RNA sequence: GGGAACGACUCGAGUAGAGUCGAAAACUUGGCGCUUCCACUGGUGAAUGUGGUUGUGUAUGUUACGAGAGACAAAGUAGCGCCUAACGGCUUUCGGAUCUCCUUCGGUGUUUGUCUUGAAUUUCGACGGAGCAAUCUGAUUCGUCAGAUUGCUCCGAAAAGAAACAACAACAACAAC
Reactivity to DMS in 0.01 (KOAc 150mM, MgCl2 10mM, bicine 150mM(pH8.5), 24C), signal-to-noise 1, nucleotides 027 to 126: c080u000u010g010g010c030g000c010u000u000c000c010a090c020u010g020g060u030g000a160a060u000g020u060g000g000u020u010g020u000g000u010a030u000g000u000u030a100c140g010a240g000a020g000a000c020a010a150a100g090u000a050g000c000g040c020c010u000a080a080c120g040g000c110u000u000u000c000g000g010a180u000c030u000c000c020u000u000c050g000g000u000g000u010u000u030g040u060c020u000u000g030a090a070u000u030u000c010g030a280

About this RNA
An RNA of 177 nucleotides, treated with DMS and read out base by base. The DMS profile rests on 1,586 reads.